Conditions: 150 mM KOAc, 10 mM MgCl2 and 150 mM bicine (pH 8.5), 24 C. An RNA of 207 nucleotides, treated with DMS and 2A3 and read out base by base. Source: RMDB library OK3TST, as collected in RNAgym. 2A3 adducts were read by reverse transcription with SuperScript II with manganese. For 2A3, 906 sequencing reads were counted.
[RMDB]
RNA sequence: GGGAACGACUCGAGUAGAGUCGAAAACUGAGAUAUUUCCUAGUUGAGGCAGAGUCCUGGUUCUGGCUGCUUUCAUUUCUUUAUUUUUUUGAGAUAGAGUCUCACCACUAUGUCACCCAGGCUGGAGUGCAGCGGCACGAUCUCACCUCACUGCAAAGAUAAUACGGGGUUUCGACCCCGUAUUAUCAAAAGAAACAACAACAACAAC
Reactivity to DMS in 0.01 (KOAc 150mM, MgCl2 10mM, bicine 150mM(pH8.5), 24C), signal-to-noise 1, nucleotides 027 to 156: c070u020g000a100g000a130u010a030u030u000u000c010c040u000a110g040u000u000g030a060g020g020c030a110g000a200g030u000c010c030u000g030g020u000u000c060u000g040g030c000u000g000c000u000u010u000c050a090u000u000u000c050u000u000u000a080u020u000u000u000u010u000u000g010a050g000a080u000a090g000a040g000u000c060u010c080a100c020c050a110c040u000a060u000g010u000c040a060c070c020c000a120g020g020c060u000g000g020a090g040u010g000c000a080g030c040g020g050c000a070c030g020a050u000c000u000c020a010c010c020u000c000a010c080u030g010c090a070a070a190
Reactivity to 2A3 in 0.01 (KOAc 150mM, MgCl2 10mM, bicine 150mM(pH8.5), 24C), signal-to-noise 2, nucleotides 027 to 156: c080u140g040a030g040a090u090a110u100u070u030c010c000u060a020g030u040u040g000a010g000g080c140a090g000a010g070u050c000c020u050g030g000u080u120c050u030g080g020c000u020g010c020u120u120u070c050a100u050u150u070c040u060u160u090a300u130u200u070u080u030u100u220g030a010g000a000u050a040g050a090g090u000c010u040c080a060c060c000a100c030u140a080u130g010u010c040a030c030c020c030a020g020g020c050u060g000g040a070g050u010g000c050a050g090c040g130g030c030a000c060g080a050u010c000u000c020a020c000c000u040c030a000c040u100g000c000a110a060a000